[RMDB]
RNA sequence: GGGAACGACUCGAGUAGAGUCGAAAAGAUAUGGAUCUGCGGGAGUGCCAUAGAAAUUCUCGGAAACGAGUUAUUCUACGCGCACAUCGAUCGCAGAUCCUAAGUCAAACGGCGGUUCGCCGCCGAAGACUAGUAACAUGUUCGCAUGUUACUAGUCAAAAGAAACAACAACAACAAC
Reactivity to DMS in 0.01 (KOAc 150mM, MgCl2 10mM, bicine 150mM(pH8.5), 24C), signal-to-noise 8, nucleotides 027 to 126: g010a040u000a300u010g000g010a010u000c000u010g010c000g000g010g010a050g020u000g010c000c010a060u000a010g000a010a020a300u010u000c000u000c000g000g000a070a100a240c000g020a010g010u010u000a140u000u000c000u000a010c020g010c240g000c000a010c010a110u010c160g020a060u010c010g000c000a010g000a000u000c000c000u000a000a080g000u000c030a060a110a170c030g010g010c000g000g010u000u010c240g010c000c000g010c000c000g010a070a090
Reactivity to 2A3 in 0.01 (KOAc 150mM, MgCl2 10mM, bicine 150mM(pH8.5), 24C), signal-to-noise 7, nucleotides 027 to 126: g020a010u060a050u130g010g000a000u000c000u000g010c000g000g050g000a050g010u000g010c000c010a030u030a040g030a010a060a050u240u050c010u010c000g010g030a070a080a040c010g010a000g030u110u040a230u100u010c000u010a010c040g100c010g090c070a000c010a220u240c050g080a070u120c010g000c000a010g000a000u000c000c000u010a010a000g000u000c010a060a050a100c020g000g000c010g010g050u070u090c300g060c110c000g000c000c000g030a040a020
The record gives the reactivity of an RNA of 177 nucleotides to DMS and 2A3. DMS adducts were read by reverse transcription with MarathonRT. 2A3 adducts were read by reverse transcription with SuperScript II with manganese. The RNA was probed in 150 mM KOAc, 10 mM MgCl2 and 150 mM bicine (pH 8.5) at 24 C. For DMS, 9,817 sequencing reads were counted. The 2A3 profile rests on 26,705 reads. Reactivities are rounded to 0.1 and cut off at 0 and 3. It was measured as part of the RMDB library TTRDEL.